RNA sequence: GGGAACGACUCGAGUAGAGUCGAAAAGACUGUGGCAUUUUCUGGCCAUACUUUGAGAAUUAGCCAUGCUUCAUGGUAACCAGCCGAGCUGAGGGGAGGGCUCAGCCUUGCAAGUAUAUGAGCAGCUUCAUGCAUCUGUAUAAAUGGCAGCCUGAGCGUCAUAUACGAGCUUCGGCUCGUAUAUGACAAAAGAAACAACAACAACAAC
Reactivity to 2A3 in 0.01 (KOAc 150mM, MgCl2 10mM, bicine 150mM(pH8.5), 24C), signal-to-noise 4, nucleotides 027 to 156: g060a010c180u150g010u020g020g040c060a070u130u080u110u110c120u140g070g000c010c000a020u020a020c020u060u130u150g080a090g050a100a100u130u070a090g040c010c010a030u050g040c090u130u140c020a020u060g010g010u050a080a100c030c010a020g030c010c020g040a020g010c030u030g030a080g040g020g020g010a050g000g040g000c010u000c020a000g000c030c000u020u080g030c020a060a080g080u030a050u010a030u220g040a030g030c030a010g020c040u090u100c050a060u070g010c020a130u030c060u060g080u060a020u030a100a120a100u070g050g010c010a010g000c010c020u030g010a030g060c030
Reactivity to DMS in 0.01 (KOAc 150mM, MgCl2 10mM, bicine 150mM(pH8.5), 24C), signal-to-noise 1, nucleotides 027 to 156: g010a120c120u010g020u010g020g040c000a140u000u000u000u000c050u030g000g020c020c030a080u000a040c030u010u010u010g000a180g020a110a100u000u000a060g000c000c000a080u000g020c080u010u000c060a070u000g060g020u000a130a080c040c030a080g010c050c030g020a050g040c020u000g000a100g020g010g010g030a150g030g020g030c020u000c010a050g030c030c010u000u000g020c030a040a160g000u000a050u000a100u010g020a070g030c040a070g000c120u010u000c120a050u010g020c040a090u010c050u010g000u010a050u000a060a080a060u000g030g040c010a040g010c000c000u000g000a110g030c120